An RNA of 177 nucleotides, treated with 2A3 and DMS and read out base by base.
For DMS, 2,458 sequencing reads were counted.
It was measured as part of the RMDB library OK1LIB.
RNA sequence: GGGAACGACUCGAGUAGAGUCGAAAAACUAUUUGUUCUAUAGCAAAUAAACCCGAAACACAGGAUAUAUUUGUUAUAUAUGCUUUGUGGUACACAGCUGUUAGGACCUGAGCCAUCAGGGUCCAAAGAGCAUUAUAUCGUUCGCGAUAUAAUGCUCAAAAGAAACAACAACAACAAC
Reactivity to 2A3 in 0.01 (KOAc 150mM, MgCl2 10mM, bicine 150mM(pH8.5), 24C), signal-to-noise 5, nucleotides 027 to 126: a000c020u020a030u030u020u020g060u060u010c100u160a170u250a120g000c000a000a000a010u080a120a120a080c010c000c010g070a070a120a000c030a000c010a020g000g010a000u000a000u000a010u060u170u120g110u300u010a020u010a000u000a000u090g070c020u060u160u090g010u030g010g050u080a040c090a020c010a080g080c030u120g060u220u150a070g010g000a000c000c000u020g010a020g070c050c000a100u070c060a090g040g100g060u020c000c000a000a010a000
Reactivity to DMS in 0.01 (KOAc 150mM, MgCl2 10mM, bicine 150mM(pH8.5), 24C), signal-to-noise 2, nucleotides 027 to 126: a020c220u000a000u000u000u010g010u000u030c270u060a070u070a030g000c000a010a020a000u000a010a110a090c040c000c000g050a110a060a090c020a010c060a000g000g000a020u000a000u000a000u000u010u010g010u010u050a080u000a020u000a020u000g020c020u000u010u000g040u000g000g090u050a150c080a070c130a080g000c030u010g000u010u000a100g000g000a080c000c000u000g010a040g010c140c140a020u020c030a040g030g000g010u040c000c010a010a130a090
For 2A3 the reverse transcriptase was SuperScript II with manganese. The reactions ran in a buffer of 150 mM KOAc, 10 mM MgCl2 and 150 mM bicine (pH 8.5), at 24 C. Values cover nucleotides 27 to 126.